An RNA of 207 nucleotides, treated with 2A3 and read out base by base. Values cover nucleotides 27 to 156. 2A3 is a SHAPE reagent: it acylates the 2'-hydroxyl of flexible nucleotides of all four kinds. The data come from the RNA Mapping Database (RMDB), library OK3TST. For 2A3, 342 sequencing reads were counted. The reactions ran in a buffer of 150 mM KOAc, 10 mM MgCl2 and 150 mM bicine (pH 8.5), at 24 C.
RNA sequence: GGGAACGACUCGAGUAGAGUCGAAAACUUACAAACUUAUUUAUUGACUAGCUAUUCCGCCCGUAAGCUUGGGCUAACUACCACAGGCCAUGCUGGCGGUAUUCAUAAUUGGCUGGUUGACGCCAAAGGUCAUGAUGGUAGUUUUGAUGCUAUGUUACUCAGGGAUUACGUUCGCGUAAUCCCUGAGAAAAGAAACAACAACAACAAC
Reactivity to 2A3 in 0.01 (KOAc 150mM, MgCl2 10mM, bicine 150mM(pH8.5), 24C), signal-to-noise 1, nucleotides 027 to 156: c050u290u270a180c190a120a140a020c160u290u090a130u190u130u050a190u130u160g050a060c060u000a000g000c020u010a040u300u010c040c000g060c000c000c030g190u170a060a120g050c060u300u210g000g000g000c000u000a000a000c000u000a000c000c000a000c000a030g000g000c000c000a110u190g030c190u010g060g000c020g010g000u110a090u060u050c010a010u000a240a230u200u010g160g000c050u010g210g000u020u080g020a020c000g000c000c040a030a040a000g000g010u040c090a300u020g110a200u040g010g010u000a010g000u000u020u160u020g030a060u020g000c040u100a010u180g020u020u010a090